[RMDB]
RNA sequence: GGGAACGACUCGAGUAGAGUCGAAAAGUCCCCAGUAUGACGCUAAACUGCUGACUCAUACAUACUGACACCGGUUGCUCAACAGGCUGUGUGGGACAAUAGAAUAACAAGGCUGUCAAUUUGAGCUAAAACUCCUCGGGGUUCGCCCCGAGGAGAACAACGGUAUGCUCUUCGGAGCAUACCGUUGAAAAGAAACAACAACAACAAC
Reactivity to 2A3 in 0.01 (KOAc 150mM, MgCl2 10mM, bicine 150mM(pH8.5), 24C), signal-to-noise 1, nucleotides 027 to 156: g030u050c000c000c000c000a010g020u010a040u050g040a000c010g000c150u050a070a160a120c030u090g010c020u080g030a040c050u080c080a030u070a130c000a060u070a010c020u030g120a020c010a030c000c030g130g070u160u160g000c000u020c000a000a000c000a110g060g000c050u040g040u010g050u040g050g070g000a070c000a010a040u180a070g230a210a060u160a100a010c040a030a010g160g000c060u100g090u180c000a020a080u060u020u230g010a000g020c000u040a000a100a100a100c000u000c000c000u000c000g000g000g000g000u030u080c170g060c000c010c010c000g030a000g000g000a000g000a000a000

An RNA of 207 nucleotides, treated with 2A3 and read out base by base. The data come from the RNA Mapping Database (RMDB), library M2RFPK.